[RMDB]
The record gives the reactivity of an RNA of 177 nucleotides to 2A3 and DMS. The reactions ran in a buffer of 150 mM KOAc, 10 mM MgCl2 and 150 mM bicine (pH 8.5), at 24 C.
RNA sequence: GGGAACGACUCGAGUAGAGUCGAAAAAUGUGGCGCUCCGCGGUUGGUGAGCAUGCUCGGUCCGUCCGAGAAGCCUUAAAACUGCGACGACACAUUCACCUUGAACCAAGGCGUGUACCGUUACAGGCAAUAGUAACAAUUUCGAUUGUUACUAUUGAAAAGAAACAACAACAACAAC
Reactivity to 2A3 in 0.01 (KOAc 150mM, MgCl2 10mM, bicine 150mM(pH8.5), 24C), signal-to-noise 9, nucleotides 027 to 126: a000u020g000u010g010g000c010g020c060u090c110c020g000c020g010g010u010u020g040g090u100g030a110g020c010a020u210g010c000u000c000g000g020u030c090c200g100u080c010c000g020a000g000a000a000g000c010c000u130u180a040a100a010a010c010u020g010c010g200a300c000g010a000c110a000c000a010u040u030c020a070c000c000u010u070g100a070a040c040c010a090a060g070g010c060g040u140g050u100a080c030c020g050u090u080a060c060a060g050g000
Reactivity to DMS in 0.01 (KOAc 150mM, MgCl2 10mM, bicine 150mM(pH8.5), 24C), signal-to-noise 9, nucleotides 027 to 126: a020u000g010u000g000g000c010g010c090u010c060c010g020c000g010g010u000u000g010g010u010g010a110g010c010a020u020g010c000u000c000g000g010u020c240c230g010u020c000c000g000a010g000a030a030g020c010c020u000u010a100a090a020a010c000u000g010c000g000a140c010g000a010c000a010c000a020u000u000c080a140c010c010u000u010g010a100a130c110c060a070a050g000g010c080g010u010g010u010a120c050c030g000u010u020a110c160a110g000g010

Overview: For 2A3 the reverse transcriptase was SuperScript II with manganese. The data come from the RNA Mapping Database (RMDB), libraries RFM100 and RFMREP. For DMS the reverse transcriptase was MarathonRT.